RNA sequence: GGGAACGACUCGAGUAGAGUCGAAAAACGCUGCCGAAACGAUCCUUACGGUCGGUGAUGCUGUGAAGUUCAUCGAUAAGGCUUCUGCCUGAUCUUUGCCGCAGGGGCUGGGGUUUAUCCAAAUCCAUCAUGGUCCCUGAUUCGUCAGGGACCAUGAAAAAGAAACAACAACAACAAC
Reactivity to DMS in 0.01 (KOAc 150mM, MgCl2 10mM, bicine 150mM(pH8.5), 24C), signal-to-noise 2, nucleotides 027 to 126: a090c100g040c040u000g030c010c040g010a090a130a050c150g010a070u000c040c010u000u010a150c220g010g000u000c010g000g000u000g010a020u010g030c000u010g000u000g040a110a010g000u010u020c000a040u000c050g010a080u000a090a070g000g020c020u000u000c220u010g020c030c010u000g000a060u010c060u000u010u020g010c100c110g000c080a030g020g000g000g020c110u000g040g000g010g000u000u000u020a030u020c090c100a040a060a070u000c050c030a220